[RMDB]
RNA sequence: GGGAACGACUCGAGUAGAGUCGAAAAUUUACUCACAAAUGGAAUUCAAGGGGAACAACUUCGGUCUCAGCACUUUAAUUAUUCUUCUCGUUCCCACCUAAUUUCGCAAUUUAUUGUCCUUGACUUCUAAAGUUUAAGCGUUCGCGCUUAAACUUUAAAAAGAAACAACAACAACAAC
Reactivity to 2A3 in 0.01 (KOAc 150mM, MgCl2 10mM, bicine 150mM(pH8.5), 24C), signal-to-noise 2, nucleotides 027 to 126: u000u000u040a050c030u030c010a080c010a050a140a040u160g100g080a030a080u080u160c110a050a000g000g000g000g010a060a060c050a130a110c050u010u020c070g030g000u030c010u040c070a010g010c010a030c050u000u100u120a100a120u040u100a170u200u000c030u020u030c030u030c080g000u060u010c050c030c000a050c000c030u080a060a160u090u150u080c000g000c030a000a010u080u130u030a080u030u220g130u060c010c000u010u010g020a010c000u000u000c000
Reactivity to DMS in 0.01 (KOAc 150mM, MgCl2 10mM, bicine 150mM(pH8.5), 24C), signal-to-noise 1, nucleotides 027 to 126: u000u020u030a030c030u040c080a030c140a000a090a150u030g000g000a040a040u000u000c020a060a040g010g000g000g000a070a080c100a150a050c030u000u020c070g040g000u020c040u010c060a030g010c080a040c120u000u000u000a060a040u060u060a100u010u000c040u000u000c090u000c010g050u000u000c000c000c000a180c090c150u040a100a140u030u010u000c070g010c080a070a030u030u010u000a090u040u030g000u000c060c050u010u030g000a100c070u030u020c090
The record gives the reactivity of an RNA of 177 nucleotides to 2A3 and DMS.
Source: RMDB library RFM100, as collected in RNAgym.
For DMS, 1,082 sequencing reads were counted.